[RMDB]
RNA sequence: GGGAACGACUCGAGUAGAGUCGAAAACGUAACCUUAAAAUCCGUGAAGCCGUCCGUGUCUGAUUAAGGUACUGAUUGUGAUGACGAUAGUAAGUCAGCAGGUGGAAGCACUUGUACGGUGGUUACUAGCCCCCUUAAACUUCGGUUUAAGGGGGCUAAAAGAAACAACAACAACAAC
Reactivity to 2A3 in 0.01 (KOAc 150mM, MgCl2 10mM, bicine 150mM(pH8.5), 24C), signal-to-noise 2, nucleotides 027 to 126: c090g000u000a000a000c000c000u030u020a000a000a000a080u090c010c010g000u030g010a010a010g000c000c000g010u040c020c040g030u020g030u000c000u010g180a300u210u090a090a020g010g010u020a000c010u020g010a000u000u030g010u020g020a000u000g000a000c000g010a000u090a040g090u030a090a090g000u000c000a000g030c000a000g090g000u010g000g080a110a000g210c000a000c000u010u000g000u000a000c020g000g000u010g000g000u000u000a020c010u010
Reactivity to DMS in 0.01 (KOAc 150mM, MgCl2 10mM, bicine 150mM(pH8.5), 24C), signal-to-noise 1, nucleotides 027 to 126: c070g090u000a000a000c000c000u010u000a000a000a130a030u050c000c000g020u010g000a150a300g040c000c010g050u000c010c120g000u000g020u000c000u000g010a040u010u050a080a000g000g000u000a010c020u020g040a040u000u000g000u000g000a040u000g000a000c050g000a120u010a100g000u000a150a220g050u000c010a010g010c040a000g040g010u010g000g000a150a230g000c000a000c000u000u000g000u020a040c000g010g010u000g000g020u000u000a000c000u010